[RMDB]
The data come from the RNA Mapping Database (RMDB), library M2PK50. The record gives the reactivity of an RNA of 177 nucleotides to 2A3 and DMS. The DMS profile rests on 3,078 reads.
RNA sequence: GGGAACGACUCGAGUAGAGUCGAAAAGGUUCCGUCUUCGGACGGAACCAAACAUAGUAUACCCUGUUGCAUGUAUACUAAGAUAUACCGUAAUGCAACGGAAAAUGCCUAGUUUCGACUAGGCAAACUAUAUGCCUUCGUUCGCGAAGGCAUAUAGAAAAGAAACAACAACAACAAC
Reactivity to 2A3 in 0.01 (KOAc 150mM, MgCl2 10mM, bicine 150mM(pH8.5), 24C), signal-to-noise 2, nucleotides 027 to 126: g000g000u000u000c000c010g000u000c020u030u050c190g100g000a000c000g000g020a000a000c010c000a000a010a000c010a030u050a000g030u020a020u020a050c020c040c090u090g000u010u000g000c010a010u030g000u020a010u000a010c020u050a070a010g100a090u080a010u020a140c020c020g030u060a070a000u040g010c010a000a020c020g060g010a130a130a040a060u080g020c000c010u010a000g010u010u020u090c240g040a020c010u000a000g010g010c000a000a000a000
Reactivity to DMS in 0.01 (KOAc 150mM, MgCl2 10mM, bicine 150mM(pH8.5), 24C), signal-to-noise 3, nucleotides 027 to 126: g010g000u000u010c000c000g030u010c000u010u010c170g040g010a020c010g000g010a010a000c000c000a010a030a070c070a130u010a030g000u000a020u010a030c020c130c110u010g000u000u000g000c000a050u010g000u000a000u000a000c000u000a030a060g010a100u000a110u000a100c010c110g000u000a060a070u000g000c010a010a000c000g000g000a060a080a120a080u000g000c000c000u000a000g000u000u010u010c220g010a020c000u000a000g010g000c000a000a000a070